[RMDB]
RNA sequence: GGGAACGACUCGAGUAGAGUCGAAAAAGAGGGGCAACAAAUUCGUUGGUUUCAACUUAAAUUCUGAGGAGAGCAACAUCGUCAUGAAGACAGAGGCCCCCACAUCUCACGCUAAGUCUGAAGUGAAUGAGGUAGUUGAGGCCACACCUGCCAGACACCUUUAAUACGUUUUCGAACGUAUUAAAGGAAAAGAAACAACAACAACAAC
Reactivity to 2A3 in 0.01 (KOAc 150mM, MgCl2 10mM, bicine 150mM(pH8.5), 24C), signal-to-noise 5, nucleotides 027 to 156: a000g120a070g000g050g020g030c040a100a020c060a060a150a080u200u150c150g040u060u060g020g010u020u040u050c050a010a040c030u110u150a030a090a170u290u120c100u140g060a120g030g040a050g010a020g060c000a010a080c010a110u080c020g080u030c030a080u220g110a130a060g010a010c030a030g050a040g060g000c010c000c000c030c010a010c010a010u010c000u010c020a010c000g020c020u070a110a070g090u040c080u090g120a070a010g030u030g070a110a220u040g010a020g030g020u050a050g030u050u010g030a010g010g000c000c010a010c000a010c000c020u040g000c030c010a000g010a020c010a020
Reactivity to DMS in 0.01 (KOAc 150mM, MgCl2 10mM, bicine 150mM(pH8.5), 24C), signal-to-noise 2, nucleotides 027 to 156: a050g020a100g010g020g020g050c040a050a150c100a090a100a150u000u000c120g030u000u000g000g020u000u000u010c060a030a100c030u000u000a060a090a160u010u000c100u010g020a110g000g000a180g010a080g010c040a110a100c060a090u010c060g010u010c030a130u010g010a140a100g010a110c050a110g000a120g000g000c030c010c000c010c000a070c020a090u010c050u000c020a040c040g010c110u000a100a180g000u000c050u000g020a160a120g050u000g020a060a060u000g020a070g020g030u000a040g000u000u010g010a050g020g000c000c020a040c050a060c070c020u000g000c000c010a060g000a070c060a140